The record gives the reactivity of an RNA of 177 nucleotides to 2A3. For 2A3 the reverse transcriptase was SuperScript II with manganese. The RNA was probed in 150 mM KOAc, 10 mM MgCl2 and 150 mM bicine (pH 8.5) at 24 C. For 2A3, 854 sequencing reads were counted. It was measured as part of the RMDB library RFM100. 2A3 is a SHAPE reagent: it acylates the 2'-hydroxyl of flexible nucleotides of all four kinds.
RNA sequence: GGGAACGACUCGAGUAGAGUCGAAAACUGUAUCCCCUGCCCUCACCCCAGCGGGUUUUCAUCGCAGUGAUAUGACGCAUUCAAACCAUUUCUUAUCACCGGGUGUCAAUCAGCUAGGGUGUGGGCGCACGACGUAUCGCUUCGGCGAUACGUCGUGAAAAGAAACAACAACAACAAC
Reactivity to 2A3 in 0.01 (KOAc 150mM, MgCl2 10mM, bicine 150mM(pH8.5), 24C), signal-to-noise 2, nucleotides 027 to 126: c070u060g100u190a160u020c040c000c000c030u050g030c000c000c000u000c000a030c000c000c000c000a000g000c000g000g000g000u000u000u000u000c010a010u000c050g130c300a000g000u010g000a000u000a000u050g080a120c060g000c170a150u100u180c150a040a090a150c100c000a070u080u070u070c000u000u010a000u000c000a000c000c000g040g000g000u000g000u000c000a000a000u000c000a000g000c010u000a000g000g000g000u000g000u020g010g010g000c000g060